An RNA of 177 nucleotides, treated with DMS and read out base by base.
The RNA was probed in 150 mM KOAc, 10 mM MgCl2 and 150 mM bicine (pH 8.5) at 24 C.
The DMS profile rests on 3,103 reads.
Reactivities are given for positions 27 through 126.
DMS adducts were read by reverse transcription with MarathonRT.

RNA sequence: GGGAACGACUCGAGUAGAGUCGAAAAUGUAUUUGGGGGUACGUGGGGAAAAUUGGGGAAAUAUAGAUUUUACUCAAAUCUUUUUUUUUAGGGGCCUCCAAAACCCCCAAAACCGUGUUGCCCCUAACAAUCGGACGAAAUUCGUUUUGUUUGAUUGAAAAGAAACAACAACAACAAC
Reactivity to DMS in 0.01 (KOAc 150mM, MgCl2 10mM, bicine 150mM(pH8.5), 24C), signal-to-noise 1, nucleotides 027 to 126: u030g000u000a080u000u020u020g010g010g010g000g020u000a020c150g030u010g000g000g000g000a080a060a110a080u010u000g010g000g000g000a010a010a020u020a080u030a020g010a020u000u000u000u020a040c130u010c040a010a010a010u010c000u000u000u000u000u000u010u000u000u000a070g010g000g000g040c100c030u000c000c040a020a020a090a070c000c000c000c000c000a000a010a010a030c080c080g010u010g000u010u000g000c010c000c010c010u000a020a120